[RMDB]
RNA sequence: GGGAACGACUCGAGUAGAGUCGAAAAUAGUUCUAGCAGUAAACGAUGCCGACUGGACGGGACAGUGUGUGUUGUCCAUGAGAAAUCUUGAGUAUGCGGGUUCUGGGGAUAGUAUGCUCGCAAGAGUGAAACUUGAAGAGAUUGACGGAAGGACACCGACACGUUUUAACUUCGGUUAAAACGUGUCAAAAGAAACAACAACAACAAC
Reactivity to 2A3 in 0.01 (KOAc 150mM, MgCl2 10mM, bicine 150mM(pH8.5), 24C), signal-to-noise 2, nucleotides 027 to 156: u100a000g020u010u060c040u060a020g000c030a020g040u140a030a050a010c070g060a070u070g020c000c030g020a060c050u050g000g030a040c030g010g010g040a020c030a060g010u020g030u000g020u020g040u130u020g010u000c050c020a070u050g000a000g040a050a050a020u040c020u020u040g000a020g040u040a040u080g030c050g000g020g000u010u140c030u060g000g010g000g010a010u010a020g010u030a020u150g000c000u000c040g020c030a050a020g010a010g030u100g020a050a050a030c020u070u050g010a060a040g020a010g010a050u010u110g060a010c030g000g030a010a030g050g000a010c030a040c110c020
Reactivity to DMS in 0.01 (KOAc 150mM, MgCl2 10mM, bicine 150mM(pH8.5), 24C), signal-to-noise 1, nucleotides 027 to 156: u010a060g000u010u000c070u000a070g000c030a040g030u010a070a090a090c090g010a050u000g000c150c110g000a120c030u000g040g010a100c010g010g040g030a100c030a160g000u000g000u000g080u010g000u000u010g010u010c020c030a090u020g020a200g020a080a050a070u000c000u000u000g000a110g010u030a080u010g010c000g010g010g020u000u000c010u000g000g010g000g010a060u000a110g060u010a060u020g000c040u000c030g000c170a050a180g000a080g070u010g010a090a070a100c020u000u020g020a120a050g040a050g000a130u000u000g010a130c040g010g000a060a020g030g000a060c030a080c030c040
This 207-nucleotide RNA was probed chemically with 2A3 and DMS.
Reactivities are given for positions 27 through 156.
Reactivities are rounded to 0.1 and cut off at 0 and 3.
The reactions ran in a buffer of 150 mM KOAc, 10 mM MgCl2 and 150 mM bicine (pH 8.5), at 24 C.